An RNA of 207 nucleotides, treated with 2A3 and DMS and read out base by base. Source: RMDB library M2RFPK, as collected in RNAgym. Conditions: 150 mM KOAc, 10 mM MgCl2 and 150 mM bicine (pH 8.5), 24 C. For 2A3, 2,881 sequencing reads were counted. For DMS, 3,435 sequencing reads were counted.

RNA sequence: GGGAACGACUCGAGUAGAGUCGAAAAGAAAGAAAGAAAGCUGACCCUUCUGCUGACGGAUCUUGUGGAGCACCAUAGUGCAGAAGGGGAGAGAAGCUUUAAUGCCGACCGUCUGGGCAGCCUUGAAAAAACGGAUUCUUCUUCGGAAGAAUCCGAACGUUACUAUUAACUUCGGUUAAUAGUAACGAAAAGAAACAACAACAACAAC
Reactivity to 2A3 in 0.01 (KOAc 150mM, MgCl2 10mM, bicine 150mM(pH8.5), 24C), signal-to-noise 3, nucleotides 027 to 156: g040a000a040a000g070a040a090a010g080a040a020a000g000c010u030g110a110c010c000c000u000u000c000u000g000c030u060g020a030c050g030g040a080u080c030u120u230g090u190g130g050a050g080c060a050c050c010a060u100a050g170u110g050c010a000g000a000a000g000g000g010g000a000g000a000g000a010a000g000c000u050u030u010a050a050u070g020c010c000g040a080c010c020g020u050c040u090g000g000g030c010a010g010c020c020u060u100g090a110a070a000a000a000a010c000g000g000a000u000u000c000u000u000c010u020u020c060g110g000a000a000g000a000a000u000c000c000g000a000a000
Reactivity to DMS in 0.01 (KOAc 150mM, MgCl2 10mM, bicine 150mM(pH8.5), 24C), signal-to-noise 2, nucleotides 027 to 156: g030a100a110a080g000a100a100a110g010a070a060a020g020c010u010g010a150c020c000c000u000u000c010u000g000c000u000g020a070c070g020g020a130u000c090u000u030g040u000g030g020a080g030c120a150c030c010a060u000a140g020u000g010c000a010g010a020a030g000g020g000g020a050g010a100g000a140a090g000c020u020u000u000a060a080u010g020c000c000g020a070c020c000g020u000c050u010g020g020g030c020a030g000c040c040u020u000g000a000a100a070a110a110a140c000g000g000a050u000u000c000u000u000c000u000u010c300g000g000a010a000g010a040a020u010c000c000g010a000a020